[RMDB]
RNA sequence: GGGAACGACUCGAGUAGAGUCGAAAAGUCAAUUUUUAGGCCAACAAUUUUCUCUUUUCAUUUGGGCUUAUUAUCUGAUGAGGAAAAUAGGCUGAUGUCCGACACUUGACUCAUUAGGAGAAAACUAGAGUAGGAUAAUCUUCGGAUUAUCCUACUCAAAAGAAACAACAACAACAAC
Reactivity to DMS in 0.01 (KOAc 150mM, MgCl2 10mM, bicine 150mM(pH8.5), 24C), signal-to-noise 3, nucleotides 027 to 126: g000u020c060a040a040u020u010u010u010u010a110g000g000c030c050a090a120c160a070a080u010u000u010u000c030u000c010u000u000u010u010c090a060u000u000u010g040g000g020c070u000u000a010u000u000a060u000c010u000g010a110u000g000a210g000g010a050a050a030a020u000a100g020g020c010u000g020a080u010g010u020c000c040g010a100c240a020c180u000u000g000a130c040u000c060a060u010u000a060g000g000a110g000a030a050a040a080c250u000a100
Reactivity to 2A3 in 0.01 (KOAc 150mM, MgCl2 10mM, bicine 150mM(pH8.5), 24C), signal-to-noise 2, nucleotides 027 to 126: g010u000c000a010a010u000u040u060u140u230a040g010g000c010c000a070a050c010a090a050u000u060u080u010c040u000c000u040u110u070u080c100a130u010u040u110g030g020g000c000u050u050a050u070u060a060u020c020u020g040a050u060g000a070g000g020a010a020a010a010u050a030g000g040c040u030g100a120u110g090u010c020c010g040a010c020a010c100u110u010g030a040c000u010c060a050u010u110a030g040g080a060g050a030a070a010a030c100u140a040